An RNA of 207 nucleotides, treated with 2A3 and read out base by base. It was measured as part of the RMDB library M2RFPK. The reactions ran in a buffer of 150 mM KOAc, 10 mM MgCl2 and 150 mM bicine (pH 8.5), at 24 C. For 2A3, 812 sequencing reads were counted.
RNA sequence: GGGAACGACUCGAGUAGAGUCGAAAAAUCCGUGGUUAUCGGGUGCGCACCGCUCCUCCUCCGGCUGUUCUCCUUCACAGCUAUGACCCAUGCGCCGCACAGGCAGUGUCCCGCUUCGUGUGCAAAAAAAACCGCCAGUACUUCGGUACUGGCGGAACAUAGGUUCUGACUUCGGUCAGAACCUAUGAAAAGAAACAACAACAACAAC
Reactivity to 2A3 in 0.01 (KOAc 150mM, MgCl2 10mM, bicine 150mM(pH8.5), 24C), signal-to-noise 1, nucleotides 027 to 156: a000u030c030c010g000u050g000g060u080u150a100u270c010g030g030g010u080g030c000g010c000a040c000c020g000c000u050c000c030u030c020c000u000c020c020g010g010c030u010g010u080u080c060u010c040c070u140u140c040a040c000a000g000c020u060a040u230g040a050c000c000c020a110u110g060c080g000c000c050g130c000a000c000a030g080g000c010a000g010u020g010u010c060c000c010g000c060u030u040c110g100u010g000u030g020c000a150a000a000a000a000a000a100a080c000c000g000c000c020a000g000u000a000c000u030u110c210g150g000u000a010c000u000g000g000c000g000g000a000a000